[RMDB]
RNA sequence: GGGAACGACUCGAGUAGAGUCGAAAAGACGACCGGCCGGACACCGCCGUGUGCCCGGCCCACAAGUGGAGGCUUCGAACUCCCACCUGACCGCCCCCUGGGGCGGCGGGUCACCGGUCAGACGGUCACAAAUGAUCAGUUUCGACUGAUCAUUUGUAAAAGAAACAACAACAACAAC
Reactivity to DMS in 0.01 (KOAc 150mM, MgCl2 10mM, bicine 150mM(pH8.5), 24C), signal-to-noise 4, nucleotides 027 to 126: g010a170c120g000a030c010c020g010g010c010c010g020g010a010c000a010c010c060g020c200c270g000u030g040u010g000c010c010c000g040g000c020c020c010a020c080a010a010g020u040g000g000a020g010g000c030u030u020c250g000a080a040c000u000c000c000c000a010c000c000u010g010a150c000c000g000c000c010c010c040c240u030g000g030g010g000c010g000g000c020g010g010g010u000c100a040c040c000g010g000u010c000a120g010a100c130g010g000u010c150
Reactivity to 2A3 in 0.01 (KOAc 150mM, MgCl2 10mM, bicine 150mM(pH8.5), 24C), signal-to-noise 7, nucleotides 027 to 126: g070a010c050g000a010c010c010g000g000c000c000g000g020a030c010a010c010c040g300c080c110g160u240g010u000g100c010c000c010g000g010c000c000c000a060c010a000a130g030u270g160g000a000g000g010c050u170u110c240g040a050a020c000u000c010c000c000a010c000c000u110g160a300c010c000g000c000c000c000c000c110u300g020g000g000g000c000g000g000c000g000g010g000u010c010a030c030c010g000g000u010c010a020g080a090c060g060g060u100c060

Chemical mapping of a 177-nucleotide RNA with DMS and 2A3. In probing experiments dimethyl sulfate is read out at A N1 and C N3, which are open when not base-paired. Reactivities are rounded to 0.1 and cut off at 0 and 3. The RNA was probed in 150 mM KOAc, 10 mM MgCl2 and 150 mM bicine (pH 8.5) at 24 C.